[RMDB]
RNA sequence: GGGAACGACUCGAGUAGAGUCGAAAAGCCCGAAAGUUCGCUUUCGGGCAAAAGAAAGCUCCUGCGGGAGCAAAGCACACGCAGAAAAACAGUGCAAAAGCUAAAGUACCGUGUUCGCACGGUACAAGGACUAUAACUACUUCGGUAGUUAUAGUCCAAAAGAAACAACAACAACAAC
Reactivity to DMS in 0.01 (KOAc 150mM, MgCl2 10mM, bicine 150mM(pH8.5), 24C), signal-to-noise 1, nucleotides 027 to 126: g010c000c000c000g040a020a020a010g070u000u010c230g010c000u000u000u000c010g000g000g040c000a000a000a070a020g000a120a170a210g000c040u000c050c000u030g050c200g040g070g030a020g000c000a000a040a050g000c020a000c040a020c120g000c110a180g000a080a050a110a080a120c150a110g010u000g010c040a120a050a090a070g000c040u000a090a050a070g030u000a000c000c000g050u000g000u000u010c180g020c000a000c000g010g000u000a000c000a060a060
Reactivity to 2A3 in 0.01 (KOAc 150mM, MgCl2 10mM, bicine 150mM(pH8.5), 24C), signal-to-noise 2, nucleotides 027 to 126: g000c000c000c000g000a000a010a000g060u110u180c190g040c230u000u000u000c000g000g000g020c010a000a000a000a000g010a030a060a020g010c030u000c010c000u040g040c220g060g010g040a020g030c040a040a070a010g000c020a010c000a010c050g120c040a080g190a100a110a050a030a000c030a040g000u000g020c020a040a110a000a080g080c070u160a180a060a020g000u010a000c000c020g000u000g020u040u030c210g020c060a000c000g010g000u000a000c010a000a000

Chemical mapping of a 177-nucleotide RNA with DMS and 2A3. The RNA was probed in 150 mM KOAc, 10 mM MgCl2 and 150 mM bicine (pH 8.5) at 24 C. Reactivities are given for positions 27 through 126. It was measured as part of the RMDB library M2PK50.